[RMDB]
Chemical mapping of a 177-nucleotide RNA with DMS and 2A3. Source: RMDB library OK2TRN, as collected in RNAgym.
RNA sequence: GGGAACGACUCGAGUAGAGUCGAAAAGACAAGGAAAGAAAUGGAAGUCUCUCCUUCUGCAGAGCAGCUUGUCCAGGUAGGAGCACAGGGUUUACUCUAGGCCCUGCAUGUGAAUGACUGACAUUCAUAGGUAAUCAUCGUUCGCGAUGAUUACCUAAAAAGAAACAACAACAACAAC
Reactivity to DMS in 0.01 (KOAc 150mM, MgCl2 10mM, bicine 150mM(pH8.5), 24C), signal-to-noise 3, nucleotides 027 to 126: g000a040c150a040a060g000g020a050a090a080g010a060a020a050u000g000g000a200a110g000u000c010u000c010u010c010c020u000u010c020u000g010c130a100g000a100g020c110a070g000c060u000u020g010u000c050c030a030g000g040u010a060g000g010a090g020c090a090c030a020g010g010g020u010u000u000a100c150u010c180u010a120g010g000c010c010c010u010g020c050a050u000g000u010g000a070a060u010g010a090c070u000g000a230c040a040u000u010c090a180
Reactivity to 2A3 in 0.01 (KOAc 150mM, MgCl2 10mM, bicine 150mM(pH8.5), 24C), signal-to-noise 2, nucleotides 027 to 126: g040a010c090a050a070g080g070a100a100a150g070a050a100a010u070g030g030a000a070g030u000c010u000c000u000c020c000u020u060c010u030g010c060a010g020a040g180c040a010g060c030u140u110g030u000c050c000a000g090g030u070a010g020g030a000g000c010a020c000a020g050g020g020u080u090u140a110c090u070c040u100a060g000g010c000c000c000u020g030c090a080u070g040u030g030a100a030u100g010a020c020u020g020a010c000a020u030u060c020a040